[RMDB]
Notes:
The record gives the reactivity of an RNA of 177 nucleotides to DMS and 2A3. DMS adducts were read by reverse transcription with MarathonRT. The 2A3 profile rests on 1,099 reads. The RNA was probed in 150 mM KOAc, 10 mM MgCl2 and 150 mM bicine (pH 8.5) at 24 C. For DMS, 2,550 sequencing reads were counted. 2A3 adducts were read by reverse transcription with SuperScript II with manganese.
RNA sequence: GGGAACGACUCGAGUAGAGUCGAAAAGAUGUAGCGAGCGUAAAUGUUAAAAUAUAGAACCUGACAGAGCAUCGCAAGUUAGGGGAUCGGCAAUCAAGAAGCUACCGGCGGAAAACGCCUAUAGAAAGGGAUUAAAUAUCUUCGGAUAUUUAAUCCCAAAAGAAACAACAACAACAAC
Reactivity to DMS in 0.01 (KOAc 150mM, MgCl2 10mM, bicine 150mM(pH8.5), 24C), signal-to-noise 2, nucleotides 027 to 126: g000a100u010g000u000a020g010c000g010a100g060c050g010u030a020a130a080u010g010u010u030a080a050a050a120u030a080u030a140g020a200a220c020c030u010g000a030c030a020g010a300g040c030a060u000c080g040c040a080a150g080u000u020a030g020g000g000g020a070u010c070g000g000c070a050a040u000c100a050a050g000a070a190g000c030u000a000c010c170g060g050c020g000g000a070a060a070a100c060g010c010c010u020a060u020a070g020a080a060a090
Reactivity to 2A3 in 0.01 (KOAc 150mM, MgCl2 10mM, bicine 150mM(pH8.5), 24C), signal-to-noise 1, nucleotides 027 to 126: g060a050u030g000u030a000g020c030g040a010g000c000g000u060a170a000a000u100g060u090u180a060a070a130a000u270a050u090a080g040a000a050c000c010u000g050a000c040a030g090a020g000c000a120u080c070g000c100a100a000g010u050u040a010g010g060g000g010a090u060c000g020g000c010a000a080u070c030a040a060g070a020a010g000c000u000a010c010c020g020g000c020g030g000a000a030a000a300c000g020c020c030u050a060u030a130g100a020a110a050